The record gives the reactivity of an RNA of 177 nucleotides to DMS and 2A3. The reactions ran in a buffer of 150 mM KOAc, 10 mM MgCl2 and 150 mM bicine (pH 8.5), at 24 C. Values cover nucleotides 27 to 126. For 2A3 the reverse transcriptase was SuperScript II with manganese.

RNA sequence: GGGAACGACUCGAGUAGAGUCGAAAAAGCUUAGGCCACUUGCUUGAGUACAAGCCUAACCAAGUUGAUUUAUUCAAUACUCGAGCAACAAAGACACAGUUCGAAGCAUGGUACAAUGCAGUCAAAGCUAGAAUCUGCGUUUCGACGCAGAUUCUAGAAAAGAAACAACAACAACAAC
Reactivity to DMS in 0.01 (KOAc 150mM, MgCl2 10mM, bicine 150mM(pH8.5), 24C), signal-to-noise 1, nucleotides 027 to 126: a030g000c150u000u050a160g030g020c000c100a000c100u090u000g000c030u000u000g000a000g000u000a000c030a070a120g000c000c050u010a090a130c180c060a000a030g000u000u000g010a160u070u000u050a150u050u000c000a000a190u000a000c000u000c000g000a000g000c000a000a080c300a060a270a050g010a100c050a090c150a050g030u000u000c050g010a100a180g000c090a030u000g000g000u030a000c180a100a040u000g000c080a080g000u000c000a050a160a140g000
Reactivity to 2A3 in 0.01 (KOAc 150mM, MgCl2 10mM, bicine 150mM(pH8.5), 24C), signal-to-noise 3, nucleotides 027 to 126: a000g040c030u040u010a020g000g010c040c060a110c040u030u040g000c020u070u040g000a000g000u060a080c110a170a020g000c010c000u060a020a060c050c040a070a080g050u010u020g080a070u050u050u240a190u100u190c030a050a010u020a040c020u000c000g000a000g000c020a010a010c010a010a140a000g070a000c040a000c000a190g050u110u080c060g150a070a000g020c040a070u060g000g060u140a150c090a090a020u020g070c010a000g040u040c020a080a000a050g040